Conditions: 150 mM KOAc, 10 mM MgCl2 and 150 mM bicine (pH 8.5), 24 C. This 177-nucleotide RNA was probed chemically with 2A3 and DMS. It was measured as part of the RMDB library M2PK50. For DMS the reverse transcriptase was MarathonRT. High 2A3 reactivity points to a flexible backbone, as in loops and unpaired stretches.

RNA sequence: GGGAACGACUCGAGUAGAGUCGAAAACCAACCGCCUUCGGGCGGUUGGGAUGACAGUCGCGAGGAAAGUCCGGGCUGACAGUCCACGACAGAACCCGGCUUAAAUCUAUCGCUUCGGCGAUAGAAAAUUCUCCUCUGAAUUCGUUCAGAGGAGAAUAAAAGAAACAACAACAACAAC
Reactivity to 2A3 in 0.01 (KOAc 150mM, MgCl2 10mM, bicine 150mM(pH8.5), 24C), signal-to-noise 1, nucleotides 027 to 126: c020c000a010a000c000c010g030c000c000u080u050c280g180g020g010c000g000g020u000u010g020g020g040a030u100g050a000c060a050g040u030c030g070c140g130a140g020g060a200a000a030g020u020c070c050g000g030g000c070u060g060a110c020a010g030u000c020c000a070c120g020a000c000a010g030a060a080c010c010c000g000g020c000u070u070a030a130a080u010c000u000a010u000c000g010c050u040u050c240g080g000c000g000a000u010a000g000a050a020a000
Reactivity to DMS in 0.01 (KOAc 150mM, MgCl2 10mM, bicine 150mM(pH8.5), 24C), signal-to-noise 3, nucleotides 027 to 126: c000c000a020a000c020c000g060c010c010u000u010c250g020g000g030c010g010g010u010u000g000g000g000a050u000g000a130c150a060g010u000c010g000c110g000a120g010g000a090a100a080g010u000c000c060g000g010g010c060u010g010a070c070a080g010u000c020c040a090c190g000a070c020a060g000a200a220c010c010c000g000g020c030u000u000a050a080a150u000c000u000a000u000c000g010c000u000u010c200g020g000c000g000a010u000a010g000a020a050a130